[RMDB]
RNA sequence: GGGAACGACUCGAGUAGAGUCGAAAAAGAGCUGACUUGCUCAUGGCUUGUGACUCACCUGGCUGGUUGAGGUGAGCUUGGCUCACAUGCCUCUCUGUGGGGACAAGGAACGCUAUCAGAAAAGUGGCUUCCAAAGGCCCCUCAUUUGACCAGUGGGGUAUAGCCCGAAAUUCGUUUCGGGCUAUACAAAAGAAACAACAACAACAAC
Reactivity to 2A3 in 0.01 (KOAc 150mM, MgCl2 10mM, bicine 150mM(pH8.5), 24C), signal-to-noise 1, nucleotides 027 to 156: a010g020a010g000c030u060g230a260c090u180u110g000c000u030c030a040u070g050g000c040u000u050g010u010g070a070c010u030c000a050c010c010u030g010g000c020u060g000g000u000u070g020a010g050g020u000g000a000g000c050u070u090g060g020c010u010c020a010c000a020u190g010c000c010u000c020u020c010u020g050u060g000g020g000g020a010c020a080a120g040g000a020a010c140g000c040u020a090u300c030a060g270a190a090a040a020g040u020g040g050c000u000u010c010c010a050a000a020g060g000c000c010c000c000u010c000a040u020u060u110g020a000c000c020a010g100u080g080g010g000